Overview:
Structure probing data (DMS and 2A3) for a 207-nucleotide construct. It was measured as part of the RMDB library M2RFPK. Values cover nucleotides 27 to 156.
RNA sequence: GGGAACGACUCGAGUAGAGUCGAAAAACUUUGAUGGCGGUACUAUGAAUUGAUGCAAGGUGUGGAGCUACCUUAAACAGUUCUGGUGGUGCUCUGAAUGGAGUGCUCUACUGAGAUUAUAAAAUAGCAUGCAUAGAGUGCUUCGGCACUCUAUGAACCUUACAUGUCUGUUCGCAGACAUGUAAGGAAAAGAAACAACAACAACAAC
Reactivity to DMS in 0.01 (KOAc 150mM, MgCl2 10mM, bicine 150mM(pH8.5), 24C), signal-to-noise 1, nucleotides 027 to 156: a070c070u020u010u010g020a090u000g000g040c050g030g020u000a050c060u010a130u000g030a120a120u000u000g000a110u000g030c080a080a100g030g010u000g040u000g060g020a150g030c070u000a040c000c050u000u010a060a070a120c070a140g020u000u000c030u010g020g070u010g030g030u000g010c030u010c030u020g010a080a110u050g000g000a070g010u000g010c010u000c030u000a060c020u000g000a090g000a090u000u000a130u010a050a040a030a100u000a080g050c030a080u000g020c000a000u000a000g000a060g020u000g020c000u000u010c300g050g010c000a010c010u000c010u000a000u000g000a030a090
Reactivity to 2A3 in 0.01 (KOAc 150mM, MgCl2 10mM, bicine 150mM(pH8.5), 24C), signal-to-noise 6, nucleotides 027 to 156: a000c090u160u070u110g060a050u070g040g010c020g010g040u030a030c030u050a080u150g070a080a070u120u070g060a070u080g080c060a020a040g020g000u050g020u060g040g030a020g010c010u000a020c010c000u060u090a050a090a050c020a050g010u050u040c020u040g030g010u040g010g050u020g000c020u010c010u050g100a090a070u120g020g020a020g020u020g000c010u000c010u030a020c010u050g040a010g030a070u080u130a100u190a110a070a060a050u130a030g100c070a060u120g000c000a000u000a000g000a000g000u000g000c000u010u010c020g020g000c000a000c000u000c000u000a000u000g000a000a000
For DMS, 2,509 sequencing reads were counted. The reactions ran in a buffer of 150 mM KOAc, 10 mM MgCl2 and 150 mM bicine (pH 8.5), at 24 C. For 2A3, 4,645 sequencing reads were counted.